The record gives the reactivity of an RNA of 177 nucleotides to 2A3 and DMS.
RNA sequence: GGGAACGACUCGAGUAGAGUCGAAAACCUAGGACACUAGGGCAAAGGUUUCAAACCUGGAACAAGGCACUGGAGGAAGAUCUGCUGCCAGUCAGCAGUGCGGGCCCUCGAGUUAGCAGUCCGUGCGCCAGUGCUGAAGAUUCGUCUUCAGCACUGGAAAAGAAACAACAACAACAAC
Reactivity to 2A3 in 0.01 (KOAc 150mM, MgCl2 10mM, bicine 150mM(pH8.5), 24C), signal-to-noise 2, nucleotides 027 to 126: c010c010u040a040g020g020a010c040a020c140u060a070g010g020g000c040a090a100a020g150g020u060u150u280c180a220a220a050c000c110u040g030g000a070a040c040a070a050g070g000c020a020c050u050g060g010a010g020g010a050a030g030a080u010c000u040g000c000u010g000c000c030a080g150u260c010a010g020c020a000g020u050g100c030g010g080g020c000c020c040u020c010g080a080g040u130u190a000g010c010a000g010u000c010c050g050u020g010c050g020
Reactivity to DMS in 0.01 (KOAc 150mM, MgCl2 10mM, bicine 150mM(pH8.5), 24C), signal-to-noise 3, nucleotides 027 to 126: c010c010u000a070g000g000a120c200a170c040u000a050g010g010g000c110a080a100a050g010g000u000u010u010c140a100a090a080c070c030u000g000g010a070a070c100a110a130g010g010c030a050c020u000g010g010a030g000g010a140a080g010a080u000c010u000g000c030u010g010c000c170a140g010u010c020a020g000c000a000g010u010g020c120g010g000g010c160c040c010u000c020g000a040g000u000u000a040g030c050a110g000u000c030c010g010u000g000c140g000